[RMDB]
RNA sequence: GGGAACGACUCGAGUAGAGUCGAAAACACACACUAAGGUUCUUGAGAUAGAACCCAACUCAACUAUCUCAAGUUCUAGUUGACAACUUAGACAUCGAAAUGUCUAGUUGUAAGUGUGUGGAGACAAGAUAGUAUACUCUUUCGAGAGUGUGCUAUCAAAAGAAACAACAACAACAAC
Reactivity to 2A3 in 0.01 (KOAc 150mM, MgCl2 10mM, bicine 150mM(pH8.5), 24C), signal-to-noise 9, nucleotides 027 to 126: c000a000c000a000c000a000c000u060a060a100g090g000u000u000c000u000u010g000a010g000a000u010a000g070a070a030c000c030c010a070a060c040u070c070a020a040c000u000a000u000c000u000c000a000a000g000u000u000c010u010a030g050u030u130g030a000c000a000a000c000u080u130a010g000a000c000a010u040c140g210a130a190a120u030g000u000c000u000a000g000u000u000g000u010a040a030g000u000g000u000g000u010g010g010a040g030a010c060a070a030
Reactivity to DMS in 0.01 (KOAc 150mM, MgCl2 10mM, bicine 150mM(pH8.5), 24C), signal-to-noise 9, nucleotides 027 to 126: c000a000c000a000c000a010c000u000a120a130g000g000u000u000c000u000u000g000a010g000a010u000a000g000a100a090c130c100c130a060a080c120u020c160a120a130c000u000a000u000c010u000c000a010a010g000u000u000c010u000a160g010u020u020g010a130c000a000a010c000u020u040a000g010a010c000a010u020c300g020a080a120a130u000g000u000c000u000a010g000u000u000g000u000a050a020g000u000g010u000g000u000g000g000a090g010a090c150a080a090
Structure probing data (2A3 and DMS) for a 177-nucleotide construct. The RNA was probed in 150 mM KOAc, 10 mM MgCl2 and 150 mM bicine (pH 8.5) at 24 C. DMS adducts were read by reverse transcription with MarathonRT. Values cover nucleotides 27 to 126. Source: RMDB library OK1LIB, as collected in RNAgym. For 2A3, 90,303 sequencing reads were counted.